[RMDB]
RNA sequence: GGGAACGACUCGAGUAGAGUCGAAAAUGUCACACAGUAGCGAGGGAUGCAAUUAAUUGCAUCUACACCAAGCUCAAGGCUUGGAUUUCGACUUGUGUCGAGUCGUUCCCACUCGCUACGCCCACAAGCUACAUCUAGCAUUCGUGCUAGAUGUAGCAAAAGAAACAACAACAACAAC
Reactivity to DMS in 0.01 (KOAc 150mM, MgCl2 10mM, bicine 150mM(pH8.5), 24C), signal-to-noise 2, nucleotides 027 to 126: u010g040u000c280a120c220a220c110a090g020u000a000g040c030g010a020g010g000g000a010u000g020c020a000a060u020u000a080a080u000u030g000c010a000u000c000u000a040c180a240c040c000a010a010g010c000u000c250a140a070g000g010c010u000u010g000g010a160u000u000u000c000g010a000c000u000u000g000u010g010u000c000g020a000g000u000c000g000u000u000c000c000c000a020c000u000c010g020c010u000a020c000g010c040c030c020a120c100a050a100